An RNA of 177 nucleotides, treated with 2A3 and DMS and read out base by base. It was measured as part of the RMDB library OK2TRN. DMS adducts were read by reverse transcription with MarathonRT. The 2A3 profile rests on 1,513 reads. The reactions ran in a buffer of 150 mM KOAc, 10 mM MgCl2 and 150 mM bicine (pH 8.5), at 24 C.
[RMDB]
RNA sequence: GGGAACGACUCGAGUAGAGUCGAAAAGAGGAGCGCUCCGUGACCGAUACCCGCACGUACGUGCUCGACACCUCUGUGCUGCUGUCCGAUCCGUGGGCGUGCAGCCGGUUCGCCGAACACGAUGUGGGCAGCUAUUGCCAUUCGUGGCAAUAGCUGCAAAAGAAACAACAACAACAAC
Reactivity to 2A3 in 0.01 (KOAc 150mM, MgCl2 10mM, bicine 150mM(pH8.5), 24C), signal-to-noise 1, nucleotides 027 to 126: g080a020g060g030a050g000c070g000c100u090c050c010g080u040g080a180c000c010g020a010u070a070c000c020c040g000c010a010c040g060u290a000c010g000u010g000c010u000c010g000a020c000a030c060c020u000c060u100g100u150g020c020u010g000c000u000g010u000c010c000g030a170u100c080c110g090u280g000g000g000c090g060u120g000c000a010g020c000c000g010g000u050u110c060g040c030c020g010a030a010c030a000c010g000a060u010g030u060g050g000
Reactivity to DMS in 0.01 (KOAc 150mM, MgCl2 10mM, bicine 150mM(pH8.5), 24C), signal-to-noise 1, nucleotides 027 to 126: g010a100g000g020a230g010c100g000c060u000c080c030g040u000g000a140c040c000g020a200u010a090c040c010c040g050c010a010c020g000u000a130c100g010u000g020c020u000c000g010a040c050a100c190c130u020c120u000g030u000g040c020u000g000c010u010g000u000c030c000g010a140u020c140c250g040u010g010g010g010c010g000u000g040c000a020g000c000c020g000g000u010u000c290g000c010c020g010a020a010c050a030c010g020a050u000g010u000g020g000